[RMDB]
RNA sequence: GGGAACGACUCGAGUAGAGUCGAAAAAUACAAGGGGAGGUUUCGGCCAAAUGUUGUAUGCAGAAAGCGUGAGGAAGGUAGCACUUAGACACUCACGAGUAGCGGUUCGGCAGUAGUGCUAAAAAGAGACAGUACGAAAAGUUCGCUUUUCGUACAAGAUAAAAAACAGGUUCGCCUGUUUUUUAUCAAAAGAAACAACAACAACAAC
Reactivity to DMS in 0.01 (KOAc 150mM, MgCl2 10mM, bicine 150mM(pH8.5), 24C), signal-to-noise 2, nucleotides 027 to 156: a110u000a040c020a040a050g000g000g040g000a080g020g010u000u000u000c050g020g010c020c020a020a090a110u010g010u010u000g010u010a050u000g060c000a080g010a100a070a100g010c040g040u000g010a040g030g020a070a110g030g000u000a100g020c030a090c040u000u010a100g010a120c040a060c040u020c020a090c030g000a070g020u000a060g000c050g020g020u000u000c060g020g010c030a080g020u010a020g010u000g010c030u000a020a030a050a090a090g010a190g010a090c030a080g000u000a010c000g010a010a020a000a020g030u000u000c300g020c000u000u000u000u000c010g010u000a000c000a000a070
Reactivity to 2A3 in 0.01 (KOAc 150mM, MgCl2 10mM, bicine 150mM(pH8.5), 24C), signal-to-noise 3, nucleotides 027 to 156: a000u130a020c010a000a040g000g000g030g000a060g050g010u000u010u090c050g030g020c020c010a050a050a040u080g010u060u030g020u050a060u090g000c020a000g070a060a080a010g060c030g020u010g010a020g040g050a070a030g060g020u080a020g030c020a010c050u040u090a070g020a060c040a010c070u030c010a020c020g010a010g030u100a020g030c040g030g050u090u070c060g010g000c000a010g020u080a010g000u020g040c000u040a030a020a020a010a010g080a000g010a020c050a060g010u000a000c000g000a000a000a010a000g010u020u070c170g020c080u000u000u000u000c000g000u000a000c000a000a010